Structure probing data (2A3 and DMS) for a 177-nucleotide construct.

[RMDB]
RNA sequence: GGGAACGACUCGAGUAGAGUCGAAAAGAGGCGCUGCCGUACAUUCGCCGCUACCACGGCAAGACCGUGGUGAUCAAAUACGGCGGCAAUGCGAUGACGGAAGAACGGCUCAAGCAGGGCUUCGCGACAUGCCAUGCGUGUUCGCACGCAUGGCAUGAAAAGAAACAACAACAACAAC
Reactivity to 2A3 in 0.01 (KOAc 150mM, MgCl2 10mM, bicine 150mM(pH8.5), 24C), signal-to-noise 2, nucleotides 027 to 126: g050a010g020g030c070g000c080u030g000c020c010g020u020a040c020a030u000u040c060g000c000c000g020c040u040a010c000c000a000c020g000g000c130a150a100g060a090c000c000g020u000g020g000u010g050a050u150c090a050a060a060u190a090c080g000g000c000g000g010c000a000a020u010g030c060g110a100u100g060a040c010g010g040a140a110g050a200a090c020g080g000c060u040c060a050a030g040c050a030g080g030g000c000u040u020c050g020c010g050a020
Reactivity to DMS in 0.01 (KOAc 150mM, MgCl2 10mM, bicine 150mM(pH8.5), 24C), signal-to-noise 3, nucleotides 027 to 126: g010a030g010g010c040g000c030u010g010c000c000g010u000a160c100a070u020u000c170g070c010c000g010c050u000a110c040c000a010c010g030g020c010a200a080g020a300c010c000g030u010g000g020u020g000a100u000c190a060a040a170u010a080c220g010g000c010g010g020c040a030a020u010g000c060g010a080u010g000a100c040g000g010a150a110g010a080a090c070g000g000c020u000c010a090a130g000c040a070g000g010g000c040u010u000c030g010c100g020a190